Conditions: 150 mM KOAc, 10 mM MgCl2 and 150 mM bicine (pH 8.5), 24 C. Structure probing data (2A3 and DMS) for a 177-nucleotide construct. DMS adducts were read by reverse transcription with MarathonRT. Source: RMDB library OK2TRN, as collected in RNAgym.
RNA sequence: GGGAACGACUCGAGUAGAGUCGAAAAUGACAUCAUACUGAUCUGCGCUGUGUGUGAUGCAUCGUACCUCUGAGGUACAGGAUCGAGUAUGAUCGGUACAGCGCUGUCGAUCGGCCUAGCGCGAGAGCUUCAGCCUGCUGUUCGCAGCAGGCUGAAGAAAAGAAACAACAACAACAAC
Reactivity to 2A3 in 0.01 (KOAc 150mM, MgCl2 10mM, bicine 150mM(pH8.5), 24C), signal-to-noise 2, nucleotides 027 to 126: u140g050a030c000a050u000c000a000u020a050c020u040g020a040u060c020u070g000c010g000c120u120g010u050g010u010g090u110g150a060u120g000c000a040u110c070g040u010a020c000c010u020c300u300g150a130g030g020u000a000c020a020g070g000a060u120c080g000a010g000u160a050u190g000a020u030c000g000g070u140a100c070a050g000c020g000c000u020g040u050c070g080a210u100c040g080g030c020c060u050a020g010c060g000c000g060a100g000a000g020
Reactivity to DMS in 0.01 (KOAc 150mM, MgCl2 10mM, bicine 150mM(pH8.5), 24C), signal-to-noise 1, nucleotides 027 to 126: u000g000a160c080a030u000c010a010u010a050c000u000g010a040u010c060u010g000c070g020c070u000g020u000g010u000g010u000g000a070u000g020c050a010u000c160g000u000a060c010c000u000c180u010g000a070g010g020u010a020c020a290g010g000a060u000c020g000a080g040u020a040u000g000a010u000c030g010g030u010a080c030a110g000c070g000c030u010g010u000c030g010a080u000c050g020g000c050c080u010a030g020c010g040c000g000a100g000a070g020